An RNA of 177 nucleotides, treated with 2A3 and DMS and read out base by base. The reactions ran in a buffer of 150 mM KOAc, 10 mM MgCl2 and 150 mM bicine (pH 8.5), at 24 C. It was measured as part of the RMDB library M2PK90. For DMS the reverse transcriptase was MarathonRT. 2A3 adducts were read by reverse transcription with SuperScript II with manganese. For 2A3, 3,357 sequencing reads were counted.
[RMDB]
RNA sequence: GGGAACGACUCGAGUAGAGUCGAAAAAUACACUGCACGUGCGUGCGAGCAGUUUUCGAAAUAAUCGUACGUACGUAAAGACCCAACUGUACUCGAUGCGAGGGUCAGCAAAGUCGUUCCCAUAUAACACCUGUUUGUGUUUCGACACAAACAGGUGAAAAGAAACAACAACAACAAC
Reactivity to 2A3 in 0.01 (KOAc 150mM, MgCl2 10mM, bicine 150mM(pH8.5), 24C), signal-to-noise 3, nucleotides 027 to 126: a010u190a010c100a020c110u150g020c050a010c040g000u000g010c010g000u000g000c000g010a030g010c170a030g030u070u040u050u250c160g130a080a020a010u140a040a040u030c000g010u000a000c000g000u020a000c000g000u010a000a000a000g000a000c000c000c000a040a010c020u080g020u070a000c010u010c050g050a090u100g000c010g040a130g030g050g000u020c060a000g000c050a120a230a010g000u010c000g000u000u000c000c000c010a000u040a000u010a000a010
Reactivity to DMS in 0.01 (KOAc 150mM, MgCl2 10mM, bicine 150mM(pH8.5), 24C), signal-to-noise 2, nucleotides 027 to 126: a130u010a080c180a100c070u000g010c290a030c010g010u000g030c020g000u000g010c000g010a000g020c290a060g030u000u000u000u000c170g000a070a060a050u000a010a150u000c010g040u020a020c000g000u000a000c000g000u000a030a100a100g000a120c060c080c010a080a060c000u010g000u000a000c000u000c010g000a180u000g030c020g000a120g040g040g020u010c060a170g000c040a060a110a070g010u000c000g010u000u000c000c000c010a060u010a030u000a080a110